[RMDB]
This 177-nucleotide RNA was probed chemically with DMS and 2A3. The 2A3 profile rests on 1,228 reads. The reactions ran in a buffer of 150 mM KOAc, 10 mM MgCl2 and 150 mM bicine (pH 8.5), at 24 C. The DMS profile rests on 1,040 reads. Source: RMDB library M2PK90, as collected in RNAgym.
RNA sequence: GGGAACGACUCGAGUAGAGUCGAAAAGCAAAGAAAUUUUAUCCCAAUAAGGCGAAGCGUGCAAGUCGAAUAAAGCUAAUGCUGCUAGCGAGCACGCGAGCCCUAGCACACUCCUAGCGAGAAAAAACAAGGCUGAAUGAUUCGUCAUUCAGCCUUGAAAAGAAACAACAACAACAAC
Reactivity to DMS in 0.01 (KOAc 150mM, MgCl2 10mM, bicine 150mM(pH8.5), 24C), signal-to-noise 2, nucleotides 027 to 126: g020c130a050a030a060g000a080a030a150u000u000u010u020a180u000c010c000c000a060a110u030a080a070g010g010c000g000a090a180g000c020g030u000g000c030a080a150g000u000c080g020a050a130u000a030a120a070g000c020u000a090a150u030g000c080u000g030c120u000a150g000c030g020a270g000c040a000c000g000c000g000a220g020c000c010c030u000a060g020c190a100c130a070c010u000c010c020u010a090g030c140g010a090g000a000a050a040a080a100a120
Reactivity to 2A3 in 0.01 (KOAc 150mM, MgCl2 10mM, bicine 150mM(pH8.5), 24C), signal-to-noise 1, nucleotides 027 to 126: g040c050a050a060a030g210a030a300a060u120u140u100u050a110u060c030c000c000a010a060u110a030a000g000g000c010g050a080a020g000c000g020u000g010c010a110a000g080u070c070g110a060a080u140a300a100a010g030c020u070a200a060u300g090c090u020g010c000u020a010g010c000g000a010g030c000a000c020g010c000g020a000g000c010c000c000u030a000g090c040a040c020a010c060u010c000c040u050a100g010c070g050a010g000a070a060a020a000a010a020